Structure probing data (2A3) for a 207-nucleotide construct. The reactions ran in a buffer of 150 mM KOAc, 10 mM MgCl2 and 150 mM bicine (pH 8.5), at 24 C. Values cover nucleotides 27 to 156.
RNA sequence: GGGAACGACUCGAGUAGAGUCGAAAAACGAUCACGUACGUGAUCGAUCUCGUUCGAACACGAUCGAACGAUCGAACGAUCGAACUCUCGAACACGUGUACGAGUUCUCACACUCGUGUGAACGAUCUCACGUGAGUUCACACGUUCGUGUACUCGACCUUGGCGGAUAAUUCGUUAUCCGCCAAGGAAAAGAAACAACAACAACAAC
Reactivity to 2A3 in 0.01 (KOAc 150mM, MgCl2 10mM, bicine 150mM(pH8.5), 24C), signal-to-noise 2, nucleotides 027 to 156: a000c010g060a020u070c000a040c110g270u300a070c180g000u130g000a000u000c000g010a020u010c010u020c010g000u020u020c040g040a080a020c090a040c140g100a120u080c050g010a090a150c010g020a060u090c030g070a110a040c160g000a040u010c010g000a080a050c030u040c020u010c100g040a130a020c080a010c070g070u000g000u090a030c010g000a000g030u060u040c030u020c050a000c000a000c030u050c030g000u000g000u050g010a000a010c010g070a070u000c110u040c050a040c040g020u000g030a000g000u010u000c000a000c010a000c000g000u060u030c050g010u030g040u070a030c040u020c030g010a040